An RNA of 177 nucleotides, treated with 2A3 and read out base by base.
RNA sequence: GGGAACGACUCGAGUAGAGUCGAAAAGACCGCUGAAUGCGGAAGUACUAGAUCAACUAGAAAGUAGAUUAAUACAAAAGCUACGUCUCGAAACUAGUUGAUCUAGUUCAAUCGAGACGUAGGAAGAGACGCAUCAGGGUUUCGACCCUGAUGCGUCAAAAGAAACAACAACAACAAC
Reactivity to 2A3 in 0.01 (KOAc 150mM, MgCl2 10mM, bicine 150mM(pH8.5), 24C), signal-to-noise 1, nucleotides 027 to 126: g040a010c000c000g000c000u110g090a260a170u300g000c000g000g010a030a030g030u050a060c000u000a000g020a020u000c000a000a070c000u000a000g050a110a060a000g090u150a000g090a050u200u040a100a090u100a180c060a000a130a000a000g070c000u000a000c030g000u030c000u000c000g020a090a000a030c010u020a000g070u080u000g000a000u020c000u000a000g000u000u080c020a000a050u000c000g000a000g000a000c000g000u020a000g030g030a070a030g120a000